[RMDB]
The record gives the reactivity of an RNA of 207 nucleotides to DMS and 2A3.

RNA sequence: GGGAACGACUCGAGUAGAGUCGAAAAAGUUAACAUGAUGGCUGACAUCAGCGAGAACUCAGUAAAUGUGGAUUAAAUGAGAAAAUUCAAAAGAAUGAUUACUUACCUUUUUAAAGUUAUCAAUGAAUUCUAUACAAAUAACAACUUAAAGGUCACAAAUUACUACCACUUUCGAGUGGUAGUAAUUAAAAGAAACAACAACAACAAC
Reactivity to DMS in 0.01 (KOAc 150mM, MgCl2 10mM, bicine 150mM(pH8.5), 24C), signal-to-noise 1, nucleotides 027 to 156: a070g030u000u000a090a130c040a140u000g000a080u000g000g020c090u000g010a240c010a030u000c020a100g000c040g020a150g010a070a120c020u000c040a060g020u000a060a070a100u010g000u000g000g020a110u000u000a080a070a080u010g000a140g030a070a110a090a100u000u000c050a040a080a100a190g000a050a050u000g020a130u000u000a070c010u010u000a070c010c000u000u000u000u000u000a030a080a160g000u000u000a050u000c010a080a190u000g000a100a160u000u000c080u000a120u000a140c040a050a120a040u000a040a010c020a010a070c070u010u000a010a020a000g010g000u000c040a050c040a080
Reactivity to 2A3 in 0.01 (KOAc 150mM, MgCl2 10mM, bicine 150mM(pH8.5), 24C), signal-to-noise 2, nucleotides 027 to 156: a000g150u130u050a090a000c070a060u070g020a010u070g030g050c060u060g040a020c010a080u090c020a050g060c080g030a160g000a090a000c010u010c060a020g020u150a100a090a060u150g010u090g110g000a040u100u090a070a110a060u150g030a030g140a050a150a000a070u130u160c060a010a000a000a180g010a050a060u060g030a020u130u030a020c000u020u020a030c000c000u060u110u030u020u140a030a040a000g000u020u020a020u030c040a040a030u040g010a010a040u160u000c110u130a180u010a230c000a000a300a000u060a130a000c030a000a020c010u020u070a040a020a020g000g010u050c030a010c010a060
Reactivities are given for positions 27 through 156. The 2A3 profile rests on 967 reads. For DMS, 2,027 sequencing reads were counted. The reactions ran in a buffer of 150 mM KOAc, 10 mM MgCl2 and 150 mM bicine (pH 8.5), at 24 C.